[RMDB]
RNA sequence: GGGAACGACUCGAGUAGAGUCGAAAAAAUUGCAACGUCACGCAGAUGCGUGAACUGCCAACACUGGACUCAGCGACAUUCAAUGUCGAAUGCUUUCGAAAAUAUGCAUGUAAUGACGAGUAUUGGGAAGUAGAGAUACCUUCGGGUAUCUCUACUUAAAAGAAACAACAACAACAAC
Reactivity to 2A3 in 0.01 (KOAc 150mM, MgCl2 10mM, bicine 150mM(pH8.5), 24C), signal-to-noise 4, nucleotides 027 to 126: a010a030u200u160g020c020a040a040c070g010u000c000a000c000g000c030a070g080a300u300g050c010g000u010g020a030a040c030u020g000c000c030a050a010c040a010c040u070g020g010a020c000u020c050a020g060c030g010a000c010a020u130u130c130a280a150u090g010u010c000g000a020a000u020g010c010u030u070u140c040g080a060a000a060a030u210a060u110g020c040a010u080g010u140a180a090u100g070a030c070g030a010g070u060a090u070u110g060g010g050
Reactivity to DMS in 0.01 (KOAc 150mM, MgCl2 10mM, bicine 150mM(pH8.5), 24C), signal-to-noise 5, nucleotides 027 to 126: a070a070u010u000g010c050a060a070c220g010u010c010a010c010g010c010a270g010a130u030g030c010g040u000g010a050a040c120u000g010c030c070a030a040c090a060c050u010g010g000a090c090u000c030a060g010c010g000a030c010a050u010u010c180a090a070u000g020u000c010g000a070a040u000g000c040u000u000u000c130g020a090a060a080a090u010a040u000g000c010a020u000g010u000a090a100u000g010a080c060g000a050g010u000a110u010u000g000g000g010
About this RNA:
The record gives the reactivity of an RNA of 177 nucleotides to 2A3 and DMS. 2A3 adducts were read by reverse transcription with SuperScript II with manganese. For 2A3, 2,653 sequencing reads were counted. The DMS profile rests on 4,674 reads. Source: RMDB library OK2TRN, as collected in RNAgym.